Chemical mapping of a 207-nucleotide RNA with DMS and 2A3. The DMS profile rests on 3,550 reads. For 2A3, 3,691 sequencing reads were counted. DMS adducts were read by reverse transcription with MarathonRT. The reactions ran in a buffer of 150 mM KOAc, 10 mM MgCl2 and 150 mM bicine (pH 8.5), at 24 C.
[RMDB]
RNA sequence: GGGAACGACUCGAGUAGAGUCGAAAACGGACGCCUUUGUCCCCGCUCAGGAUGUUCUGGCUUGGGCGAAGUCAGUGUUAAUCGAUCCGAACGGAAUCCUGGGCAAUGAAGACCACGCCCACCUACAAGACGCUCCUCUCGCUUUCCUAUGGGCUGAGUCCAUUAAUGAGUUCGCUCAUUAAUGGACAAAAGAAACAACAACAACAAC
Reactivity to DMS in 0.01 (KOAc 150mM, MgCl2 10mM, bicine 150mM(pH8.5), 24C), signal-to-noise 2, nucleotides 027 to 156: c080g000g020a050c020g020c040c060u000u000u010g010u000c020c000c040c040g010c030u000c000a120g020g020a050u000g010u000u000c020u000g020g020c060u010u040g000g040g010c030g020a090a110g000u000c060a120g010u000g020u020u010a110a150u000c040g010a100u010c080c020g050a050a070c010g000g020a100a030u000c020c000u020g020g010g050c000a070a060u040g000a080a080g000a100c010c070a050c050g000c020c020c010a060c050c030u000a100c060a100a110g010a110c010g000c010u000c020c010u000c020u000c040g020c060u000u010u010c020c020u010a070u010g010g030g000c020u000g010a300
Reactivity to 2A3 in 0.01 (KOAc 150mM, MgCl2 10mM, bicine 150mM(pH8.5), 24C), signal-to-noise 5, nucleotides 027 to 156: c030g030g030a010c030g050c040c090u070u160u190g060u020c000c020c020c050g020c000u020c010a020g000g000a040u040g060u180u040c010u020g040g010c070u040u060g040g030g000c040g030a020a000g030u040c050a040g010u010g080u240u200a150a130u120c080g050a110u040c040c040g050a070a050c080g000g020a040a000u020c000c010u020g000g000g000c020a010a040u090g010a030a000g050a020c020c030a060c090g020c010c010c010a020c000c020u100a090c040a100a050g060a010c020g020c040u030c010c010u030c000u020c030g030c050u070u050u010c020c010u060a100u130g040g010g000c020u000g010a000